[RMDB]
Annotation
The record gives the reactivity of an RNA of 177 nucleotides to DMS and 2A3. The 2A3 profile rests on 6,949 reads. The reactions ran in a buffer of 150 mM KOAc, 10 mM MgCl2 and 150 mM bicine (pH 8.5), at 24 C. 2A3 is a SHAPE reagent: it acylates the 2'-hydroxyl of flexible nucleotides of all four kinds. Source: RMDB library OK2TRN, as collected in RNAgym.

RNA sequence: GGGAACGACUCGAGUAGAGUCGAAAAUACGCUUCCUUCUACAUAAGGCGUUGAACAGCAAGGUCGUCCUAAUGGACCAACAGGGAUUAGGUACUCCUUGUGAGUCCUACUUAAAUCAGGCUAAAGCGAUUCCUAAAGGUUUCGACCUUUAGGAAUCAAAAGAAACAACAACAACAAC
Reactivity to DMS in 0.01 (KOAc 150mM, MgCl2 10mM, bicine 150mM(pH8.5), 24C), signal-to-noise 8, nucleotides 027 to 126: u000a050c080g010c040u000u000c060c040u000u000c140u010a110c170a090u010a090a060g010g010c070g020u000u010g000a100a080c120a150g000c050a070a070g000g010u000c100g010u000c010c020u000a060a070u000g010g010a090c020c050a110a050c120a050g000g000g000a050u000u000a060g010g010u000a090c200u000c000c010u000u000g020u000g000a240g010u010c010c010u000a100c140u010u010a060a060a110u000c140a060g010g010c110u000a050a110a110g020c210
Reactivity to 2A3 in 0.01 (KOAc 150mM, MgCl2 10mM, bicine 150mM(pH8.5), 24C), signal-to-noise 4, nucleotides 027 to 126: u090a000c010g010c000u060u060c020c000u060u140c100u170a160c030a130u190a090a040g040g000c040g050u030u060g040a080a030c020a030g020c010a000a060g020g010u030c020g020u000c030c000u040a080a050u120g040g050a040c010c000a030a040c050a070g010g020g000a000u040u090a050g070g100u100a050c030u000c000c000u020u010g020u000g020a020g000u000c010c000u010a080c010u060u170a040a110a130u150c060a050g140g000c050u110a090a040a000g070c060